Structure probing data (2A3) for a 177-nucleotide construct.
RNA sequence: GGGAACGACUCGAGUAGAGUCGAAAAAACUUUCACUAAAAGAUGCAAGUAAAAUAAUAAAAACACCUAAUACAUUAAUAGUUGUGUAAUCAUCUUUACUUAUUGAAAUAAUGGAUAUUCCUAUAAAAACUGUCUUGGAGUUCGCUCCAAGACAGUUAAAAGAAACAACAACAACAAC
Reactivity to 2A3 in 0.01 (KOAc 150mM, MgCl2 10mM, bicine 150mM(pH8.5), 24C), signal-to-noise 1, nucleotides 027 to 126: a000a000c030u000u000u000c000a000c000u070a030a030a030a030g030a000u000g010c130a000a000g080u300a000a160a060a060u190a000a080u140a080a140a000a060a000c020a020c000c020u100a210a080u080a220c130a120u090u300a150a100u020a080g050u030u300g000u000g000u000a000a220u030c030a000u000c030u000u000u100a080c080u030u020a020u030u130g030a000a000a000u130a050a150u050g010g000a000u000a010u170u000c000c000u030a030u020a180a100a240

Notes
For 2A3, 353 sequencing reads were counted.